[RMDB]
RNA sequence: GGGAACGACUCGAGUAGAGUCGAAAACUGCCUUCGAAACACCAUCGAUCGUCCCUUCUUCUUUACCUUCUUCUGGCUCUUCCGAUGGAGACGCGACCGGUGGCAUCACCUCUCGGUUCGUCCCAACCUGCUUUUUGUUGUCUAUCUGAGCCUCUGCCAGGUAUAAGAUGUUCGCAUCUUAUACCUGAAAAGAAACAACAACAACAAC
Reactivity to 2A3 in 0.01 (KOAc 150mM, MgCl2 10mM, bicine 150mM(pH8.5), 24C), signal-to-noise 1, nucleotides 027 to 156: c110u180g100c030c030u050u030c010g050a010a100a050c030a030c030c030a040u030c000g010a020u020c010g010u030c030c000c000u080u080c080u110u020c020u070u220u100a130c030c000u080u080c010u060u030c050u120g010g030c020u000c020u110u000c050c030g120a120u090g000g030a180g030a030c010g020c080g080a030c010c000g030g000u020g020g000c020a080u160c030a070c000c000u000c000u150c010g000g000u020u040c010g000u000c020c000c000a000a110c000c030u100g040c130u220u030u000u000u070g030u020u020g030u000c040u030a140u050c030u090g020a010g020c000c040u040c060u020g000c040
The data come from the RNA Mapping Database (RMDB), library VIROID. Structure probing data (2A3) for a 207-nucleotide construct. Values cover nucleotides 27 to 156. Values are in units of 0.01, from 0 to 300, in steps of 10. The reactions ran in a buffer of 150 mM KOAc, 10 mM MgCl2 and 150 mM bicine (pH 8.5), at 24 C.